[RMDB]
RNA sequence: GGGAACGACUCGAGUAGAGUCGAAAACUAGGCAUGAUUAAAAUGGUAGCUCCAUAUUUCCUUCUCUUUGCUAGCCAUGUGUACAGUAAGAAGCAGACAAGAUGGCACUGGCCAAGUGGACAGCCCAUUUGCAUAAUAAGAUUGGGGUGGGGCAACAGUGCAAAAUUACUUUCGAGUAAUUUUGCACAAAAGAAACAACAACAACAAC
Reactivity to DMS in 0.01 (KOAc 150mM, MgCl2 10mM, bicine 150mM(pH8.5), 24C), signal-to-noise 1, nucleotides 027 to 156: c080u010a070g000g030c020a010u000g000a120u000u000a000a060a050a060u020g020g020u000a130g050c020u000c020c030a050u010a120u000u000u050c020c000u000u000c060u000c040u000u000u000g020c010u000a110g000c070c030a080u010g040u000g040u000a060c080a160g010u000a070a120g020a150a110g030c050a110g010a100c010a080a080g020a120u000g020g090c090a080c040u000g010g000c010c000a000a140g040u010g000g020a040c060a040g000c150c000c030a020u000u010u020g020c060a110u020a070a070u000a070a070g020a160u000u000g030g000g030g050u020g070g000g020g040c060a050a020c100a150
Reactivity to 2A3 in 0.01 (KOAc 150mM, MgCl2 10mM, bicine 150mM(pH8.5), 24C), signal-to-noise 3, nucleotides 027 to 156: c040u040a020g100g020c030a090u080g010a160u210u250a100a080a040a130u190g090g040u050a030g010c010u000c020c010a030u020a160u090u110u080c030c000u020u020c010u020c020u030u070u040g030c020u050a070g060c020c020a070u150g020u010g000u030a220c040a040g020u120a090a110g070a160a020g120c080a010g060a100c010a100a050g060a100u050g000g010c020a020c080u000g000g000c010c000a060a020g010u030g010g080a060c040a060g040c000c000c000a020u020u020u080g000c000a050u070a200a060u090a190a120g010a060u040u100g000g000g000g000u010g020g000g000g000c010a040a010c000a010
This 207-nucleotide RNA was probed chemically with DMS and 2A3.
The RNA was probed in 150 mM KOAc, 10 mM MgCl2 and 150 mM bicine (pH 8.5) at 24 C.
2A3 adducts were read by reverse transcription with SuperScript II with manganese.
It was measured as part of the RMDB library OK3TST.
For DMS, 2,273 sequencing reads were counted.
In probing experiments dimethyl sulfate is read out at A N1 and C N3, which are open when not base-paired.